[RMDB]
RNA sequence: GGGAACGACUCGAGUAGAGUCGAAAAAUAACUGGCUUGUGGCAGCCAAGCGUCCAUAGCGACGUUGCUUUUUGAUUCUUCGAUGUCGGCUCUUCCUAUCAUUGCGAAGUAGAACUCGCCAAUUGUUGUAGAGAUGGUUCUUCGGAACCAUCUCUACAAAAGAAACAACAACAACAAC
Reactivity to 2A3 in 0.01 (KOAc 150mM, MgCl2 10mM, bicine 150mM(pH8.5), 24C), signal-to-noise 2, nucleotides 027 to 126: a000u150a000a020c080u010g000g020c000u070u090g060u170g210g080c160a000g000c010c000a000a020g000c000g000u000c000c020a230u180a060g110c160g000a010c020g000u020u040g130c010u000u000u000u000u000g000a000u020u000c000u000u010c000g030a050u300g030u000c000g000g100c060u060c000u090u030c000c010u060a070u090c100a080u000u090g010c000g010a020a000g000u160a060g060a060a040c010u000c000g020c100c020a070a090u120u180g030u050u040